Overview
The record gives the reactivity of an RNA of 207 nucleotides to 2A3. The data come from the RNA Mapping Database (RMDB), library OK3TST. The RNA was probed in 150 mM KOAc, 10 mM MgCl2 and 150 mM bicine (pH 8.5) at 24 C.
RNA sequence: GGGAACGACUCGAGUAGAGUCGAAAAGCAGGUCAGGGGUGAGGUCUCCAGGCCCUCGGUGAGCUGGAGGUAUGGAGUCCGGAUGAUGCAGGUCCGGGGUGAGGUCGCCAGGCCCUGCUGUGAGCUGGAUGUGUGGUGUCUGGAUGGUGCAGGUCAAGCCAUUUAAUGAGUUCGCUCAUUAAAUGGCAAAAGAAACAACAACAACAAC
Reactivity to 2A3 in 0.01 (KOAc 150mM, MgCl2 10mM, bicine 150mM(pH8.5), 24C), signal-to-noise 2, nucleotides 027 to 156: g040c010a010g000g040u030c020a010g030g010g000g040u050g070a040g010g010u010c000u020c020c000a140g040g050c000c040c000u060c040g050g020u070g020a030g000c040u030g050g000a000g000g010u040a050u070g010g000a050g020u040c020c000g000g000a000u060g010a010u110g010c030a030g000g040u020c000c010g020g010g000g080u070g070a100g000g090u090c020g020c020c000a010g030g030c000c010c000u020g030c000u030g030u070g010a000g000c010u030g010g050a080u040g090u010g020u040g030g040u010g030u030c050u030g040g030a080u040g030g000u030g000c020a010g050g010u100c050a030a010

High 2A3 reactivity points to a flexible backbone, as in loops and unpaired stretches.